[RMDB]
RNA sequence: GGGAACGACUCGAGUAGAGUCGAAAAUAGUGUUCGCACUAAUUUACACCUUUGUGCUUUCUUGAGUCCAGAACUACGUCGGAACAUACCCAUUGGGUAUGUAGCGACGCUGGACAAUGAUGGAAAGCACUCUGGUCAUGUGGUAGUUCGCUACCAAGAUUUACAAACCCUUCGGGGUUUGUAAAUCAAAAGAAACAACAACAACAAC
Reactivity to DMS in 0.01 (KOAc 150mM, MgCl2 10mM, bicine 150mM(pH8.5), 24C), signal-to-noise 1, nucleotides 027 to 156: u010a030g040u000g000u000u000c210g030c050a080c030u030a060a090u000u040u000a180c030a070c000c030u000u010u000g000u010g010c010u020u000u010c010u010u010g000a070g010u020c000c000a180g010a200a300c040u040a130c010g020u000c010g010g010a210a040c000a010u000a000c000c020c000a280u000u020g020g000g030u000a020u000g000u010a060g010c020g020a010c010g000c070u010g050g000a030c000a060a030u010g040a140u000g010g000a040a040a070g010c010a000c000u010c040u010g020g010u000c070a030u000g020u010g020g020u000a000g010u000u000c180g030c030u000a080c000c060a060a260
Reactivity to 2A3 in 0.01 (KOAc 150mM, MgCl2 10mM, bicine 150mM(pH8.5), 24C), signal-to-noise 2, nucleotides 027 to 156: u060a010g010u010g040u080u110c220g050c070a010c020u040a090a130u090u140u180a040c040a030c040c000u010u010u020g000u000g000c000u000u000u000c000u000u020g020a000g000u000c000c010a000g010a120a070c140u150a070c270g010u000c010g100g160a060a010c000a000u000a000c020c020c060a300u230u300g000g000g000u000a000u000g010u010a010g060c000g010a000c010g000c010u010g000g000a000c000a000a030u050g000a000u030g000g000a000a000a000g000c000a000c010u000c000u000g020g000u020c050a140u250g060u050g120g000u000a000g020u040u150c150g000c130u000a020c000c010a020a040

This 207-nucleotide RNA was probed chemically with DMS and 2A3.
DMS adducts were read by reverse transcription with MarathonRT.
Conditions: 150 mM KOAc, 10 mM MgCl2 and 150 mM bicine (pH 8.5), 24 C.
Reactivities are given for positions 27 through 156.